[RMDB]
RNA sequence: GGGAACGACUCGAGUAGAGUCGAAAAGAAGGAAAGAAAGAAAUCUGACAGAAUGACGGAUUCGAUCGUUGUGGUCGGCGGGCCACCACGUCAUUCCUUCGCACUGUCUCCGGGCAGACCGCCAUAAAAAAGCGGAUCUACUUCGGUAGAUCCGCAAGUUAAAAUGAUACUUCGGUAUCAUUUUAACAAAAGAAACAACAACAACAAC
Reactivity to 2A3 in 0.01 (KOAc 150mM, MgCl2 10mM, bicine 150mM(pH8.5), 24C), signal-to-noise 6, nucleotides 027 to 156: g000a010a000g000g020a020a030a060g070a040a170a020g060a050a130a040u030c030u040g040a070c070a080g270a240a230u170g050a060c040g010g020a010u050u040c030g040a070u140c030g010u000u000g000u000g000g010u030c070g010g020c020g000g000g000c010c000a000c000c010a000c000g010u020c010a030u020u020c000c000u000u000c010g010c020a070c040u010g010u010c010u020c070c060g000g020g000c010a020g020a060c000c010g000c010c010a070u270a030a140a020a030a020a010g000c000g000g000a000u000c000u000a010c010u020u020c070g070g000u010a000g000a000u000c000c000g000c000a000a000
Reactivity to DMS in 0.01 (KOAc 150mM, MgCl2 10mM, bicine 150mM(pH8.5), 24C), signal-to-noise 2, nucleotides 027 to 156: g000a080a010g040g030a030a030a130g010a120a080a190g030a110a040a050u010c030u000g000a300c050a140g010a030a100u000g010a080c020g000g000a120u000u000c030g000a160u000c020g030u010u000g040u000g010g020u000c000g000g040c070g070g000g000c030c020a050c000c050a020c020g000u000c010a090u000u000c010c010u000u000c050g010c050a210c030u000g000u000c000u000c030c040g020g000g020c050a050g020a080c030c010g000c020c030a160u040a010a050a090a070a120a170g010c000g010g010a010u010c000u000a000c010u000u000c290g050g030u000a010g000a020u000c000c000g010c000a000a010